Structure probing data (2A3) for a 207-nucleotide construct.

RNA sequence: GGGAACGACUCGAGUAGAGUCGAAAAUUCGGGAGAAGGAUUGGCUCUAGCGUGCUAGAACUGUUUGUUGUGGGGAAUCUGACUGUUUACUAAAAACAUAGCUUUGUGUGUGGACGCAAAGUGAAUUCUGCCCAGUGCACUUUUAGUUACGGCCUGUCCUGGAAUAUAUGUUCGCAUAUAUUCCAGGAAAAGAAACAACAACAACAAC
Reactivity to 2A3 in 0.01 (KOAc 150mM, MgCl2 10mM, bicine 150mM(pH8.5), 24C), signal-to-noise 4, nucleotides 027 to 156: u130u050c040g000g010g020a050g010a030a030g030g010a030u050u140g030g010c010u010c010u040a030g030c020g050u070g010c030u040a040g030a100a060c050u070g060u160u110u030g040u030u040g000u030g010g030g010g040a020a050u030c050u030g050a060c010u020g070u090u130u060a050c050u040a040a050a020a060a000c050a050u060a030g020c000u000u010u020g000u010g020u030g050u100g120g110a030c000g000c000a020a010a010g010u020g050a030a080u140u060c040u090g000c000c030c030a040g000u030g050c010a010c040u030u020u030u080a030g010u030u050a020c010g020g010c010c030u060g020u030

For 2A3 the reverse transcriptase was SuperScript II with manganese. The reactions ran in a buffer of 150 mM KOAc, 10 mM MgCl2 and 150 mM bicine (pH 8.5), at 24 C. The 2A3 profile rests on 2,498 reads.